Conditions: 150 mM KOAc, 10 mM MgCl2 and 150 mM bicine (pH 8.5), 24 C. Chemical mapping of a 177-nucleotide RNA with DMS and 2A3. High DMS reactivity at an A or C suggests that its Watson-Crick edge is free. Source: RMDB library OK1LIB, as collected in RNAgym. The 2A3 profile rests on 3,424 reads.
RNA sequence: GGGAACGACUCGAGUAGAGUCGAAAACAUACGUGUACAAGCCAACUUAUUGCGCUUCAAUCAAAAACUGCAUCGAUCAGCAUAAUUGAAUUUCACAAUGCUGUGGAAUAAUUUCAGUAUAAAGCUAGCAUAUCGGUAGUUUCGACUACCGAUAUGCAAAAGAAACAACAACAACAAC
Reactivity to DMS in 0.01 (KOAc 150mM, MgCl2 10mM, bicine 150mM(pH8.5), 24C), signal-to-noise 1, nucleotides 027 to 126: c100a300u080a070c110g000u000g030u020a110c180a060a000g000c000c060a010a030c060u030u000a070u000u000g020c120g000c020u030u030c160a050a100u030c090a130a100a040a110a010c070u000g020c170a100u000c080g020a100u000c130a000g010c020a000u010a060a060u000u000g000a050a070u000u000u000c000a000c050a090a030u020g000c090u000g040u000g030g000a090a090u000a020a100u020u000u000c030a080g000u000a090u020a150a010a000g000c070u010a040
Reactivity to 2A3 in 0.01 (KOAc 150mM, MgCl2 10mM, bicine 150mM(pH8.5), 24C), signal-to-noise 6, nucleotides 027 to 126: c040a040u260a100c050g140u110g070u150a040c060a060a040g000c030c000a040a020c080u190u150a150u290u130g040c120g010c050u030u020c040a010a130u040c010a010a100a020a030a040c020u040g020c020a070u020c040g040a040u050c010a000g030c010a010u030a170a080u160u100g160a130a100u070u140u110c060a040c010a040a060u100g050c080u050g040u030g020g080a040a030u160a100a060u050u060u070c050a010g040u040a060u110a190a110a040g060c090u060a030